[RMDB]
RNA sequence: GGGAACGACUCGAGUAGAGUCGAAAAGAUCAGCGCAUGUAGUACUCGACGUGAUAUAGUACCGGCCGUACUCGUACCAGGCCGAGUACGCGCGUGAUACUAGGCGCUGGAUCCGGUACGUACGGCCGCGAAGGGAUCCUUUCGAGGAUCCCUUCGCAAAAGAAACAACAACAACAAC
Reactivity to DMS in 0.01 (KOAc 150mM, MgCl2 10mM, bicine 150mM(pH8.5), 24C), signal-to-noise 2, nucleotides 027 to 126: g000a080u010c000a020g010c010g000c010a070u000g020u000a030g020u000a020c080u000c010g000a130c030g010u000g020a130u010a150u010a120g000u000a030c050c020g010g020c010c030g020u000a070c100u010c080g020u000a050c000c120a190g000g010c040c000g000a090g010u000a030c030g020c050g030c050g010u000g000a110u010a030c000u000a050g000g000c010g000c010u000g000g000a050u010c030c000g010g010u000a050c050g010u000a080c060g010g020c090c110
Reactivity to 2A3 in 0.01 (KOAc 150mM, MgCl2 10mM, bicine 150mM(pH8.5), 24C), signal-to-noise 1, nucleotides 027 to 126: g040a040u010c010a000g070c010g000c020a030u180g090u240a010g000u000a030c090u040c060g250a240c030g190u100g120a190u100a070u070a300g010u000a020c000c040g000g000c000c000g040u020a050c090u040c120g000u010a020c010c070a030g040g010c000c000g010a020g000u010a020c010g000c000g000c020g010u000g030a030u000a000c000u030a010g070g020c030g000c030u020g000g000a010u000c000c000g010g020u000a040c010g000u000a020c000g070g000c020c070
An RNA of 177 nucleotides, treated with DMS and 2A3 and read out base by base. Values cover nucleotides 27 to 126. The 2A3 profile rests on 1,458 reads. The RNA was probed in 150 mM KOAc, 10 mM MgCl2 and 150 mM bicine (pH 8.5) at 24 C.